[RMDB]
RNA sequence: GGGAACGACUCGAGUAGAGUCGAAAAGAUAUGGAAGUAACACGACGAAGGCGUUGAAAUCGGAAACGAUGGAGCCUUCGAGAACGUGUUUACUUCCUAAGUCAAAAGUAUCGGUUCGCCGAUACAACGAUUUAAAAAUGUUCGCAUUUUUAAAUCGAAAAGAAACAACAACAACAAC
Reactivity to 2A3 in 0.01 (KOAc 150mM, MgCl2 10mM, bicine 150mM(pH8.5), 24C), signal-to-noise 3, nucleotides 027 to 126: g010a020u070a040u170g000g000a010a010g010u010a000a010c000a000c020g200a010c010g000a030a010g020g000c050g250u300u090g030a070a070a000u000c010g010g000a060a040a040c000g000a010u020g010g020a010g010c000c000u000u000c000g000a000g010a040a020c000g000u010g000u030u040u010a000c000u000u000c000c000u000a060a000g030u000c030a020a020a060a150g000u010a000u000c000g000g100u040u080c300g030c060c000g010a000u000a000c010a010a020
Reactivity to DMS in 0.01 (KOAc 150mM, MgCl2 10mM, bicine 150mM(pH8.5), 24C), signal-to-noise 5, nucleotides 027 to 126: g020a050u000a300u010g010g010a020a000g000u010a000a010c000a000c000g020a170c010g010a010a000g010g020c010g020u000u010g010a070a110a020u000c010g010g000a170a080a150c000g010a010u000g000g000a160g020c000c000u000u000c000g000a060g020a110a090c010g010u000g000u000u000u000a000c000u000u000c000c000u000a010a090g000u010c040a070a070a120a130g010u000a000u000c000g010g000u010u010c240g010c010c000g010a010u000a000c000a050a130